Chemical mapping of a 177-nucleotide RNA with DMS and 2A3.
Reactivities are given for positions 27 through 126.
For 2A3 the reverse transcriptase was SuperScript II with manganese.
The RNA was probed in 150 mM KOAc, 10 mM MgCl2 and 150 mM bicine (pH 8.5) at 24 C.
It was measured as part of the RMDB library OK1LIB.

[RMDB]
RNA sequence: GGGAACGACUCGAGUAGAGUCGAAAAUAUCACGCUUCAAAUCAAUACAAUCCUUUGGUCCUACAGAAAAUGGUCUGUGUAACAACCAUUUGUUAGUAACAUUUUGAAUACCUUCUAUAAAUUUAACCUCCACACUAGUUUUCGAACUAGUGUGGAGAAAAGAAACAACAACAACAAC
Reactivity to DMS in 0.01 (KOAc 150mM, MgCl2 10mM, bicine 150mM(pH8.5), 24C), signal-to-noise 2, nucleotides 027 to 126: u020a050u010c050a000c060g020c010u010u000c020a010a100a030u010c080a100a050u000a060c180a010a030u020c000c020u000u000u000g000g000u020c000c090u000a040c080a110g000a030a050a000a010u000g000g000u020c060u000g010u030g010u020a140a060c100a040a050c030c010a020u000u020u000g000u010u030a060g020u020a030a130c090a040u010u000u010u010g000a050a090u030a010c090c090u000u010c050u010a100u000a030a050a090u020u030u030a070a060c250
Reactivity to 2A3 in 0.01 (KOAc 150mM, MgCl2 10mM, bicine 150mM(pH8.5), 24C), signal-to-noise 5, nucleotides 027 to 126: u190a030u110c030a030c030g090c030u060u040c040a000a020a140u100c040a040a040u070a150c010a030a100u080c020c050u030u010u110g050g010u050c040c010u030a000c020a040g060a040a070a030a020u050g030g070u050c070u030g060u030g090u170a100a040c010a020a000c010c010a030u030u030u020g080u050u090a080g030u050a080a040c050a160u100u070u040u130g070a090a050u060a110c030c020u040u040c060u090a130u170a140a090a090u040u070u090a050a040c000